[RMDB]
RNA sequence: GGGAACGACUCGAGUAGAGUCGAAAAGAUAUGGACUAGGCAUCGAUCUACGUCAGUUAAAGUACGCGAAACACUCCUCGGAAACGAGGAGUGGAGUAUGACGUAGGGAGCCUAGUCCUAAGUCAAAGUAACAACAAAGUUCGCUUUGUUGUUACAAGUUGGGCAUUAAGUUCGCUUAAUGCCCAACAAAAGAAACAACAACAACAAC
Reactivity to 2A3 in 0.01 (KOAc 150mM, MgCl2 10mM, bicine 150mM(pH8.5), 24C), signal-to-noise 5, nucleotides 027 to 156: g000a000u010a020u030g000g000a000c000u000a020g000g000c030a300u110c060g120a080u020c030u000a000c010g000u000c020a010g070u150u270a230a180a070g110u190a100c230g040c060g070a030a040a000c000a010c000u000c010c000u010c000g000g000a020a020a010c010g000a010g020g020a010g000u000g000g000a000g010u060a090u050g000a010c000g000u000a000g010g010g010a000g000c000c000u000a000g000u000c000c000u000a000a000g000u010c000a030a000a100g000u010a000a000c000a000a000c000a000a000a010g010u030u090c140g050c090u010u000u000g000u000u000g010u000u000a000c000a010a010
Reactivity to DMS in 0.01 (KOAc 150mM, MgCl2 10mM, bicine 150mM(pH8.5), 24C), signal-to-noise 1, nucleotides 027 to 156: g000a090u000a180u000g010g000a020c010u000a000g000g040c000a160u000c190g010a100u040c000u010a000c000g010u010c000a060g000u000u000a060a110a200g020u000a050c130g010c040g000a150a090a120c000a010c020u010c010c010u010c000g020g040a110a110a270c020g040a020g000g000a010g020u000g000g000a090g000u010a090u000g070a040c020g010u000a010g010g040g000a090g020c040c010u020a010g010u000c000c000u010a000a020g010u000c050a060a050a230g020u000a000a010c010a000a000c010a020a030a040g060u010u010c150g060c010u000u000u020g000u000u000g010u000u000a000c000a060a110

Source information
The data come from the RNA Mapping Database (RMDB), library RNAMAK. The record gives the reactivity of an RNA of 207 nucleotides to 2A3 and DMS. DMS adducts were read by reverse transcription with MarathonRT. Conditions: 150 mM KOAc, 10 mM MgCl2 and 150 mM bicine (pH 8.5), 24 C. The DMS profile rests on 2,495 reads.